[RMDB]
RNA sequence: GGGAACGACUCGAGUAGAGUCGAAAAUUCUGAGACCCGGGAUUGGCUAACCCUGUAAGUUCUCGCAUCUCAUCGAUAAUCUGUGGCUUGCGUGUCUCGGCCAUUUUGAUUGCUGCUUCGAUGAAGUCGUUAUCGAUAUUUAUUCCGCGGUCAUUAACGACCUUAGAAUUUUCGAAUUCUAAGGUCGAAAAGAAACAACAACAACAAC
Reactivity to DMS in 0.01 (KOAc 150mM, MgCl2 10mM, bicine 150mM(pH8.5), 24C), signal-to-noise 1, nucleotides 027 to 156: u000u000c030u010g010a130g000a080c000c010c020g010g000g040a090u000u010g030g070c050u000a080a080c040c000c000u020g020u010a120a090g000u000u010c020u000c100g020c090a120u010c080u000c020a040u000c130g000a130u000a070a060u000c100u010g020u000g010g010c010u000u000g020c080g020u000g020u000c080u000c100g020g010c020c000a100u000u000u000u010g000a210u010u000g040c010u020g010c080u020u000c020g010a160u020g000a060a050g000u000c130g000u000u000a070u000c000g030a080u010a130u000u000u000a140u020u000c010c060g030c050g000g030u000c010a120u000u000a090a250
Reactivity to 2A3 in 0.01 (KOAc 150mM, MgCl2 10mM, bicine 150mM(pH8.5), 24C), signal-to-noise 3, nucleotides 027 to 156: u050u000c040u060g060a050g010a130c030c030c020g030g020g000a040u070u090g050g000c040u060a050a050c020c030c050u070g080u120a050a030g030u090u070c060u020c060g000c030a050u050c050u020c040a150u090c030g040a060u040a190a080u070c080u070g020u020g010g020c020u020u100g040c020g050u080g070u000c050u040c120g030g000c020c000a020u050u090u060u120g030a050u000u060g010c040u000g000c000u010u020c020g150a170u230g030a070a020g060u020c010g010u020u080a020u070c010g010a020u000a090u060u180u050a070u130u000c030c000g020c140g040g000u030c010a020u120u090a080a050